Structure probing data (2A3 and DMS) for a 177-nucleotide construct. Conditions: 150 mM KOAc, 10 mM MgCl2 and 150 mM bicine (pH 8.5), 24 C. For 2A3, 5,613 sequencing reads were counted. 2A3 adducts were read by reverse transcription with SuperScript II with manganese. For DMS the reverse transcriptase was MarathonRT. The DMS profile rests on 16,228 reads.
RNA sequence: GGGAACGACUCGAGUAGAGUCGAAAAUGUGUGCUCGAGAGCCUCCCUGUCCGACAGAGCUUUUAGAUCUUCUGAUCUUUCCCUCGAGGAUAUCGCUUAUGCUUCAAGCGAUUCUCGGAAUAAUUAAAUUUAGGUGUAUAUUCGUAUACACCUAAAUAAAAGAAACAACAACAACAAC
Reactivity to 2A3 in 0.01 (KOAc 150mM, MgCl2 10mM, bicine 150mM(pH8.5), 24C), signal-to-noise 4, nucleotides 027 to 126: u120g030u000g010u050g040c020u010c050g160a130g010a020g100c010c010u020c020c000c000u010g070u030c030c010g020a020c030a050g100a030g080c000u030u040u020u040a020g000a000u000c010u270u070c110u300g010a020u020c000u020u020u000c000c000c000u000c000g010a020g030g010a070u040a040u120c000g000c000u040u040a080u260g090c030u140u150c090a000a000g000c000g000a010u000u000c000u000c000g000g040a050a060u160a060a060u150u140a140a090
Reactivity to DMS in 0.01 (KOAc 150mM, MgCl2 10mM, bicine 150mM(pH8.5), 24C), signal-to-noise 8, nucleotides 027 to 126: u010g020u000g020u010g010c030u000c040g010a120g000a130g000c050c030u000c030c010c010u000g000u000c040c030g010a090c100a070g010a110g010c030u000u000u000u000a030g000a020u000c010u010u010c270u010g000a020u000c010u000u000u000c000c000c000u000c010g000a020g000g010a050u000a040u000c000g010c000u000u000a090u010g020c170u000u000c090a040a010g010c000g010a020u000u000c000u000c000g010g000a080a070u010a080a100u010u000a050a100